[RMDB]
RNA sequence: GGGAACGACUCGAGUAGAGUCGAAAAUAUCCUCGUUUCGACGAGGAUAACAGAAAACUCAUGCCAAAUAAAACGCUGACAGGGAUGAGAAAAGUCAGCGAAACAUACGGGUCUUCGGACCCGUAAACAAAUUAAAUCUAUUCGUAGAUUUAAUUUGAAAAGAAACAACAACAACAAC
Reactivity to DMS in 0.01 (KOAc 150mM, MgCl2 10mM, bicine 150mM(pH8.5), 24C), signal-to-noise 3, nucleotides 027 to 126: u000a010u010c000c000u000c000g020u000u000u000c180g000a010c000g000a030g000g000a000u000a000a090c140a130g010a090a080a100a090c020u000c000a040u000g000c030c030a120a110a110u000a040a070a110a140c070g020c010u010g010a010c020a100g030g010g000a050u000g010a060g000a100a070a110a180g000u000c000a010g010c010g010a030a070a080c160a110u000a010c000g000g000g010u000c000u010u010c170g010g010a000c000c000c000g000u010a000a030a170
Reactivity to 2A3 in 0.01 (KOAc 150mM, MgCl2 10mM, bicine 150mM(pH8.5), 24C), signal-to-noise 3, nucleotides 027 to 126: u040a000u000c010c000u010c000g010u010u020u090c190g090a010c000g000a020g010g000a000u000a010a000c010a010g190a030a100a010a030c010u010c050a020u120g060c020c010a130a250a020u170a040a160a040a050c060g000c010u000g010a000c000a060g010g150g030a070u070g020a050g040a040a210a010a000g000u010c000a000g000c010g030a030a010a000c020a000u050a010c000g010g000g000u000c020u030u060c090g080g010a000c010c000c000g000u000a010a000a000

This 177-nucleotide RNA was probed chemically with DMS and 2A3. For DMS, 2,463 sequencing reads were counted. For DMS the reverse transcriptase was MarathonRT. The 2A3 profile rests on 3,643 reads.